[RMDB]
RNA sequence: GGGAACGACUCGAGUAGAGUCGAAAAGAUUUAAACAGAUGGAGAUACACAAAUGUUUGAAUCCCAGUAACAAAAAUCAUGGUAUCUCGGGUAUACAGUAGUGCAGAUACUGUAUUUUUAAUGCUCCUUAGGUUUUCCAUCUUCGGAUGGAAAACAACAUCCCUGACAGUUUCGACUGUCAGGGAUGAAAAGAAACAACAACAACAAC
Reactivity to 2A3 in 0.01 (KOAc 150mM, MgCl2 10mM, bicine 150mM(pH8.5), 24C), signal-to-noise 2, nucleotides 027 to 156: g000a000u000u010u030a010a020a000c000a010g050a070u070g110g000a160g020a110u050a050c070a010c000a050a090a030u020g000u010u000u000g040a050a000u090c080c020c000a020g070u100a100a070c040a040a070a090a050a040u100c030a010u080g010g010u000a010u020c020u010c020g000g000g070u120a100u020a070c000a010g100u110a010g050u040g260c070a020g010a140u010a020c020u020g010u000a000u000u030u000u030u090a110a130u090g020c010u070c000c020u030u060a050g050g070u000u000u010u030c000c000a010u000c000u000u060c220g020g020a000u000g000g010a000a000a000a000c000a000a000
The record gives the reactivity of an RNA of 207 nucleotides to 2A3. Values are in units of 0.01, from 0 to 300, in steps of 10.